[RMDB]
RNA sequence: GGGAACGACUCGAGUAGAGUCGAAAAAUACAGCGUAAUCGAGCGGAGGAAAACGGCACUCCGAAAAUCCGGUACGAUUAUGAUCCCACUGCCUCGACGCUAGAUGCAGAACCGGAUUGCCGAGGAAUUGUGUUUCUCAUUUCGAUGAGAAACACAAAAAAGAAACAACAACAACAAC
Reactivity to 2A3 in 0.01 (KOAc 150mM, MgCl2 10mM, bicine 150mM(pH8.5), 24C), signal-to-noise 1, nucleotides 027 to 126: a000u220a010c140a050g030c040g090u090a020a070u030c010g010a010g040c000g030g010a000g000g070a190a230a060a000c000g000g000c010a030c010u000c010c010g010a000a000a000a000u030c000c000g030g040u020a030c050g050a050u110u170a060u290g150a030u020c040c010c000a030c030u000g000c000c000u010c010g010a010c010g040c170u100a080g000a140u070g030c010a000g000a090a020c000c010g000g000a010u000u030g000c010c010g000a000g010g040a050a110
Reactivity to DMS in 0.01 (KOAc 150mM, MgCl2 10mM, bicine 150mM(pH8.5), 24C), signal-to-noise 2, nucleotides 027 to 126: a120u040a120c170a050g010c080g020u000a190a040u010c000g000a050g010c020g000g010a020g010g010a110a070a130a110c070g000g020c030a060c010u000c010c010g000a000a020a000a030u000c000c000g000g020u000a120c230g000a080u000u010a090u020g000a020u010c010c010c010a300c010u000g000c000c020u000c000g000a060c100g000c080u000a030g000a050u000g010c020a030g000a080a010c010c000g010g010a030u000u010g000c000c020g010a130g010g010a080a090

Source: RMDB library M2PK90, as collected in RNAgym.
Structure probing data (2A3 and DMS) for a 177-nucleotide construct.
The RNA was probed in 150 mM KOAc, 10 mM MgCl2 and 150 mM bicine (pH 8.5) at 24 C.
For 2A3, 928 sequencing reads were counted.